Annotation: Source: RMDB library M2PK50, as collected in RNAgym. An RNA of 177 nucleotides, treated with 2A3 and DMS and read out base by base. Conditions: 150 mM KOAc, 10 mM MgCl2 and 150 mM bicine (pH 8.5), 24 C. For DMS, 17,006 sequencing reads were counted. For 2A3 the reverse transcriptase was SuperScript II with manganese. For 2A3, 19,004 sequencing reads were counted.
RNA sequence: GGGAACGACUCGAGUAGAGUCGAAAAGGUAGCCACUUCGGUGGCUACCAAAGAGAUAGUACCUAUUGAGUUCCUGUGAAGGUACUCAUGACAGGAUGUCAAAAACAUGAUUCUUCGGAAUCAUGAAGAUAAACUAGAUGUUCGCAUCUAGUUUAUCAAAAGAAACAACAACAACAAC
Reactivity to 2A3 in 0.01 (KOAc 150mM, MgCl2 10mM, bicine 150mM(pH8.5), 24C), signal-to-noise 6, nucleotides 027 to 126: g010g000u010a000g000c010c010a010c020u050u060c180g090g000u010g000g010c000u000a000c000c000a000a000a000g020a000g000a010u040a030g070u100a120c000c010u020a120u040u050g010a010g010u020u050c000c000u020g050u070g090a040a020g000g000u000a000c010u000c010a030u050g040a030c060a060g100g060a120u090g040u060c030a060a020a020a060a060c000a000u010g000a010u000u010c010u040u050c230g100g010a000a000u000c000a000u010g010a010a030
Reactivity to DMS in 0.01 (KOAc 150mM, MgCl2 10mM, bicine 150mM(pH8.5), 24C), signal-to-noise 9, nucleotides 027 to 126: g010g020u000a000g010c010c000a010c000u000u010c180g030g020u000g010g010c000u000a000c000c010a010a040a090g010a150g000a070u000a040g010u000a100c000c000u000a150u000u000g000a030g010u000u000c000c000u000g010u020g000a200a020g000g000u000a010c000u000c030a020u000g010a100c280a080g010g000a110u000g010u010c020a070a060a090a100a150c010a000u000g000a020u000u000c000u000u010c200g020g000a010a000u000c000a000u000g000a060a090